[RMDB]
RNA sequence: GGGAACGACUCGAGUAGAGUCGAAAAGUGCACCGUACCCGCCCUCUGGGUACUUGCGGAGGUUCUUCGAUUAUAGCAACGUCAUCCGCCUCGAAGGACGUGUCAGAAUCGAGCAUCCGCGCGUUCAUUACAAAACUGCAACUCAGAAGCGGUAUCAAUUGGACAUUUACUUCGGUAAAUGUCCAAUAAAAGAAACAACAACAACAAC
Reactivity to 2A3 in 0.01 (KOAc 150mM, MgCl2 10mM, bicine 150mM(pH8.5), 24C), signal-to-noise 2, nucleotides 027 to 156: g090u060g020c090a040c140c020g050u070a080c020c010c010g000c010c020c030u040c000u000g000g000g020u020a050c020u010u100g000c000g000g030a010g060g000u040u100c010u100u030c080g000a000u000u030a120u090a190g000c050a120a110c010g020u000c000a090u150c070c090g100c180c070u170c040g120a090a020g080g000a000c000g000u000g020u180c040a030g080a080a020u000c010g000a010g000c010a020u000c000c000g040c010g000c010g040u050u030c100a120u110u200a110c130a040a120a050a010c060u150g050c030a060a000c040u020c020a010g000a050a010g010c000g000g060u050a080u140c040a030
Reactivity to DMS in 0.01 (KOAc 150mM, MgCl2 10mM, bicine 150mM(pH8.5), 24C), signal-to-noise 1, nucleotides 027 to 156: g050u010g010c060a300c040c040g030u000a060c060c000c000g000c040c040c060u000c010u000g050g010g020u010a020c020u000u010g050c000g000g030a060g020g060u000u030c020u000u010c030g020a030u000u010a100u000a130g000c020a090a060c020g010u000c000a110u000c040c040g000c110c080u000c060g010a030a080g000g050a060c010g050u000g000u000c060a200g000a050a070u000c010g000a080g060c060a080u000c000c000g000c000g010c140g040u000u010c040a090u020u030a300c090a060a010a060a120c100u000g050c020a240a090c060u030c000a030g000a170a080g000c120g010g020u010a080u000c030a120
The record gives the reactivity of an RNA of 207 nucleotides to 2A3 and DMS. Values cover nucleotides 27 to 156. 2A3 adducts were read by reverse transcription with SuperScript II with manganese.